[RMDB]
RNA sequence: GGGAACGACUCGAGUAGAGUCGAAAAUGGAAUCUACCUUCUCUAAUUCUCAAGGAGGUUUAUUCGAGAUUAUUGAGAGUCGUUGGCUUCCAUAGAUGUUCUUAGCUGAGGAAGUUCAAUGUAUGAUUACUAGGGACUAAGCAUGUAGAGGUUAGCAACCAGAUGUAUCGUUCGCGAUACAUCUGGUAAAAGAAACAACAACAACAAC
Reactivity to DMS in 0.01 (KOAc 150mM, MgCl2 10mM, bicine 150mM(pH8.5), 24C), signal-to-noise 2, nucleotides 027 to 156: u010g010g000a080a060u000c020u000a070c000c010u000u010c010u060c000u000a010a030u010u010c000u000c010a110a030g030g000a030g030g010u000u000u000a030u000u000c000g000a190g010a190u000u010a070u000u000g000a110g020a040g040u000c080g050u000u000g000g020c010u000u000c010c010a150u010a050g000a090u000g000u000u000c050u000u000a020g010c040u000g000a230g040g020a040a040g010u000u000c050a040a040u000g020u000a070u020g030a160u000u000a070c050u000a070g010g000g020a050c060u000a050a150g010c040a070u010g010u010a070g010a090g040g010u000u010a060g030c060a200
Reactivity to 2A3 in 0.01 (KOAc 150mM, MgCl2 10mM, bicine 150mM(pH8.5), 24C), signal-to-noise 3, nucleotides 027 to 156: u140g020g000a040a040u040c010u030a030c010c000u050u010c030u040c000u010a140a160u150u030c060u040c070a030a030g020g020a020g030g000u000u030u060a040u000u060c090g010a020g000a150u090u120a050u100u300g010a020g010a000g050u020c010g000u000u010g000g000c000u010u000c020c000a040u060a050g090a060u040g040u070u030c040u080u090a010g030c030u040g110a100g080g030a020a010g020u070u220c020a030a010u020g060u120a060u130g120a070u060u130a050c040u020a040g000g000g000a020c010u020a010a060g010c010a040u070g020u100a030g000a010g140g050u060u090a030g020c020a060
This 207-nucleotide RNA was probed chemically with DMS and 2A3.
Source: RMDB library ARCHII, as collected in RNAgym.
Reactivities are given for positions 27 through 156.